[RMDB]
Conditions: 150 mM KOAc, 10 mM MgCl2 and 150 mM bicine (pH 8.5), 24 C. The record gives the reactivity of an RNA of 177 nucleotides to DMS. For DMS, 5,166 sequencing reads were counted. DMS adducts were read by reverse transcription with MarathonRT. The data come from the RNA Mapping Database (RMDB), library TTRDEL.
RNA sequence: GGGAACGACUCGAGUAGAGUCGAAAAGAUAUGGAUCUUAGCAGAGCCUAAUUGUCGGAAACGACAGAUAGGCGACGAAGCUAAGAGUCCUAAGUCAAACGCAAAGCGACUUCGGUCGCUUUGCGAAGUAAUCCGUAAUGUUCGCAUUACGGAUUACAAAAGAAACAACAACAACAAC
Reactivity to DMS in 0.01 (KOAc 150mM, MgCl2 10mM, bicine 150mM(pH8.5), 24C), signal-to-noise 4, nucleotides 027 to 126: g000a020u000a010u010g000g000a070u000c000u000u000a000g020c000a000g020a020g020c010c000u010a010a270u000u000g020u000c000g020g010a000a000a010c000g010a010c000a010g000a100u000a010g010g010c000g000a070c250g000a130a140g000c000u000a000a000g010a040g010u010c000c000u000a000a100g000u000c010a120a120a250c020g000c000a010a000a010g010c000g000a010c010u000u000c230g030g010u000c000g000c000u000u000u000g010c000g030a010a070